[RMDB]
RNA sequence: GGGAACGACUCGAGUAGAGUCGAAAAGUCUACCUCCAUCUGGUCCGUCCGGGCCCUCUUCGCCGGGGGAGCCCCCUCUCCAUCCUUAUCCUUCUUUCCGAGAAUUCCUUUGACGUUUCCCAGCCAGGGAUUAUCGUCCUCAAGUUUCUUGAUUUUCACUGAUUUAUUUGUUCGCAAAUAAAUCAGUAAAAGAAACAACAACAACAAC
Reactivity to 2A3 in 0.01 (KOAc 150mM, MgCl2 10mM, bicine 150mM(pH8.5), 24C), signal-to-noise 2, nucleotides 027 to 156: g050u030c040u100a190c030c000u060c020c000a090u040c070u100g040g010u030c020c020g110u050c060c090g010g050g000c020c000c030u040c040u150u190c070g030c070c050g020g010g000g000g010a010g000c000c010c000c020c000u030c010u010c000c020a080u040c000c000u050u050a060u080c010c010u030u060c000u050u090u020c060c040g020a010g030a050a080u050u070c020c000u060u100u200g020a030c010g000u000u020u040c000c000c000a030g100c090c070a030g040g000g000a020u040u050a060u160c020g020u030c000c030u090c040a110a040g010u000u010u010c000u030u100g100a190u140u050u130u170c070